RNA sequence: GGGAACGACUCGAGUAGAGUCGAAAAUUAGCUUUAUUUUAGGAAGUGUGAACAAAACUGUGCACCAAAGAUGAGGGCUGAUGCCAGGGGCUGACAGAUUCUCACAAACGAAUUGACAUGCCAGAGAGUAGUGCUAACAAUUCGUUGUUAGCACUACAAAAGAAACAACAACAACAAC
Reactivity to 2A3 in 0.01 (KOAc 150mM, MgCl2 10mM, bicine 150mM(pH8.5), 24C), signal-to-noise 3, nucleotides 027 to 126: u040u000a000g010c000u160u040u050a090u120u200u130u090a130g070g050a040a040g020u020g000u050g120a070a020c020a030a130a070a070c100u090g040u070g050c010a010c020c010a080a070a060g050a060u090g050a050g040g030g000c000u020g000a030u050g010c030c000a030g050g000g020g000c000u000g000a020c000a030g080a050u060u020c040u000c020a070c030a040a100a030c040g050a030a020u040u080g000a020c010a030u100g030c010c010a040g040a000g010a010
Reactivity to DMS in 0.01 (KOAc 150mM, MgCl2 10mM, bicine 150mM(pH8.5), 24C), signal-to-noise 4, nucleotides 027 to 126: u010u000a050g010c030u000u000u000a050u020u000u000u020a130g010g020a040a090g030u010g030u000g000a070a040c030a040a070a100a130c150u000g020u000g000c040a070c030c040a070a080a090g010a050u000g000a090g020g000g010c040u000g010a050u000g020c040c030a080g010g000g010g020c060u000g000a030c090a080g010a100u000u000c040u000c050a070c190a050a060a090c150g000a050a040u010u010g000a090c070a040u000g000c040c030a060g010a110g000a140
The record gives the reactivity of an RNA of 177 nucleotides to 2A3 and DMS.
The RNA was probed in 150 mM KOAc, 10 mM MgCl2 and 150 mM bicine (pH 8.5) at 24 C.
DMS adducts were read by reverse transcription with MarathonRT.
It was measured as part of the RMDB library OK2TRN.
For 2A3 the reverse transcriptase was SuperScript II with manganese.